The record gives the reactivity of an RNA of 177 nucleotides to DMS and 2A3.
[RMDB]
RNA sequence: GGGAACGACUCGAGUAGAGUCGAAAAGAUAUGGACCACCCAGUGGACAUGCGUCGGCUUCGGAAACGAAGCCACGCAACAGCCACGGGUGGUCCUAAGUCAAAAGGUCCUGAGUUCGCUCAGGACCCGGCUAAAGUAUGUUCGCAUACUUUAGCCGAAAAGAAACAACAACAACAAC
Reactivity to DMS in 0.01 (KOAc 150mM, MgCl2 10mM, bicine 150mM(pH8.5), 24C), signal-to-noise 3, nucleotides 027 to 126: g000a030u000a300u010g020g000a000c000c000a010c000c000c010a150g070u000g000g000a090c140a130u000g010c000g000u000c230g040g030c010u020u000c000g010g000a070a080a140c010g000a030a000g000c010c000a000c000g010c020a010a040c300a180g000c000c010a010c010g010g000g010u000g000g000u000c000c000u000a000a050g000u010c030a090a070a120a120g010g000u000c000c000u000g000a020g010u000u020c270g010c000u000c000a010g010g000a000c000c000
Reactivity to 2A3 in 0.01 (KOAc 150mM, MgCl2 10mM, bicine 150mM(pH8.5), 24C), signal-to-noise 2, nucleotides 027 to 126: g000a000u040a030u100g010g030a000c000c000a020c020c010c070a030g000u000g070g000a160c110a300u130g020c010g040u080c210g020g010c000u000u000c000g020g050a020a030a030c010g000a010a020g040c030c000a000c000g010c000a000a010c020a020g110c020c000a010c000g010g010g000u000g000g000u010c030c000u010a010a000g010u010c010a050a000a050a060g000g010u000c020c000u010g000a010g000u140u210c300g040c160u010c000a000g000g000a000c010c000
Description
It was measured as part of the RMDB library TTRDES. The 2A3 profile rests on 3,857 reads. Reactivities are given for positions 27 through 126. For DMS the reverse transcriptase was MarathonRT. For DMS, 3,379 sequencing reads were counted.